The record gives the reactivity of an RNA of 177 nucleotides to DMS and 2A3.
The 2A3 profile rests on 2,447 reads.
Values cover nucleotides 27 to 126.
2A3 adducts were read by reverse transcription with SuperScript II with manganese.
The RNA was probed in 150 mM KOAc, 10 mM MgCl2 and 150 mM bicine (pH 8.5) at 24 C.
RNA sequence: GGGAACGACUCGAGUAGAGUCGAAAAGAUAUGGAUCCGUGGAUGAGCUUGGACCUUAAUCGGAAACGAUUAAGCUAGCUCGCCACCGGAUCCUAAGUCAAACAGCGUCCACUUCGGUGGACGCUGAUCGAUGAUACGACUUCGGUCGUAUCAUCGAAAAAGAAACAACAACAACAAC
Reactivity to DMS in 0.01 (KOAc 150mM, MgCl2 10mM, bicine 150mM(pH8.5), 24C), signal-to-noise 2, nucleotides 027 to 126: g000a040u000a300u010g000g020a000u000c000c010g030u000g010g000a110u000g020a020g010c000u010u000g060g000a130c300c010u000u000a000a000u000c000g010g020a170a160a200c000g020a020u000u000a000a020g010c000u000a010g000c000u000c000g000c010c000a000c060c240g040g000a000u000c000c000u000a000a080g010u000c020a120a110a300c000a010g000c010g020u000c000c000a010c020u000u020c260g010g050u000g020g000a020c000g010c000u000g000a020
Reactivity to 2A3 in 0.01 (KOAc 150mM, MgCl2 10mM, bicine 150mM(pH8.5), 24C), signal-to-noise 1, nucleotides 027 to 126: g040a000u070a030u160g020g010a010u000c000c000g010u010g000g130a300u170g030a030g010c070u170u210g120g190a300c070c000u010u010a010a000u010c040g040g080a070a070a000c030g010a010u020u010a000a000g000c030u010a000g010c010u010c030g000c000c000a020c040c000g030g000a000u020c000c000u000a000a000g040u010c030a060a020a070c030a000g000c010g010u000c000c020a000c010u070u100c300g130g010u000g000g010a000c000g020c000u010g000a000